[RMDB]
RNA sequence: GGGAACGACUCGAGUAGAGUCGAAAAUUCUGUCCAACAAGAAGCCGGAGUUGCUGGGUGAACCUGCCUGCCACCCCCCACCCACUGCUGUCCCUGCUGCACACCCCAACGACUCCUGCAUGCAGGGCGCAAUACGCCAUUUCGAUGGCGUAUUGCGAAAAGAAACAACAACAACAAC
Reactivity to DMS in 0.01 (KOAc 150mM, MgCl2 10mM, bicine 150mM(pH8.5), 24C), signal-to-noise 1, nucleotides 027 to 126: u000u000c010u020g000u010c050c040a080a110c140a150a130g000a100a100g000c050c030g000g000a060g030u000u010g010c060u000g000g000g020u010g000a060a120c080c040u000g030c040c010u000g020c030c040a200c080c010c000c000c000c000a150c070c000c020a080c100u000g020c050u000g000u020c030c000c000u000g000c030u020g010c040a100c150a110c100c020c000c040a020a120c060g010a050c020u020c000c090u000g000c000a050u040g040c060a060g000g000g030